[RMDB]
RNA sequence: GGGAACGACUCGAGUAGAGUCGAAAAGCGAUACCGGCUGAUAAACUCCGGUGAGUACGGCGGCCCGUUGCGUUCGUCGAACAGGUCAAGUUCGGGAUCGGUUGCAACCGGAUCAUUUUCGUCAAUGAAUCUGAUCUUAUUUCGAUAAGAUCAGAUUAAAAGAAACAACAACAACAAC
Reactivity to 2A3 in 0.01 (KOAc 150mM, MgCl2 10mM, bicine 150mM(pH8.5), 24C), signal-to-noise 8, nucleotides 027 to 126: g030c030g020a010u070a110c010c010g030g000c080u060g050a230u120a210a180a050c050u010c020c010g040g030u040g020a060g030u090a040c040g010g010c010g020g020c030c010c010g050u050u090g090c030g030u030u120c050g080u040c020g050a020a000c010a030g050g160u110c060a110a110g020u080u080c020g000g010g060a080u060c030g050g020u060u110g000c010a020a030c020c010g020g000a030u070c030a070u090u100u080u080c050g050u040c060a060a100u170g080
Reactivity to DMS in 0.01 (KOAc 150mM, MgCl2 10mM, bicine 150mM(pH8.5), 24C), signal-to-noise 9, nucleotides 027 to 126: g010c060g010a070u000a070c020c000g010g000c150u000g010a100u010a070a120a160c120u000c010c030g010g010u000g000a150g010u000a090c050g010g000c080g000g000c030c010c080g010u000u010g020c060g010u000u000c090g010u010c030g010a050a040c050a090g000g010u000c110a090a140g010u000u000c020g010g000g010a040u000c030g000g000u000u000g000c090a070a080c020c030g000g000a070u010c060a070u000u000u000u000c050g010u010c130a080a110u010g000